[RMDB]
RNA sequence: GGGAACGACUCGAGUAGAGUCGAAAACUUGAUCACCGAGUUCCAGUCCAUCUUGCCCGUGAUCUUGCUAAACUCGGGCUCUAUGUGCACGCCCGUGCUGAGUAUCUCCACCUCGUGGGGCCUGGGGACUUGACAUCAGGUUCGCCUGAUGUCAAGUAAAAGAAACAACAACAACAAC
Reactivity to 2A3 in 0.01 (KOAc 150mM, MgCl2 10mM, bicine 150mM(pH8.5), 24C), signal-to-noise 2, nucleotides 027 to 126: c010u040u120g040a020u070c020a030c050c060g020a030g010u060u000c030c020a010g030u000c030c020a100u040c060u040u040g030c040c000c030g030u030g050a090u040c020u040u120g050c050u110a090a090a080c010u010c000g000g030g000c000u000c000u060a040u040g100u090g030c020a010c040g060c000c070c050g000u010g010c030u040g010a010g030u060a080u070c050u020c000c000a040c010c010u040c020g030u050g000g040g000g020c000c000u000g000g000g020g020
Reactivity to DMS in 0.01 (KOAc 150mM, MgCl2 10mM, bicine 150mM(pH8.5), 24C), signal-to-noise 3, nucleotides 027 to 126: c030u000u000g000a040u000c060a080c080c030g000a110g000u000u000c070c030a090g000u000c060c050a050u000c050u000u000g020c020c010c050g020u000g010a060u000c100u010u000g000c120u010a060a070a090c040u000c000g020g000g000c020u010c030u010a040u010g010u010g010c050a100c110g010c060c030c070g020u000g010c030u000g010a080g000u010a130u000c030u000c010c040a070c060c030u000c060g020u000g010g000g010g010c020c010u000g000g010g000g000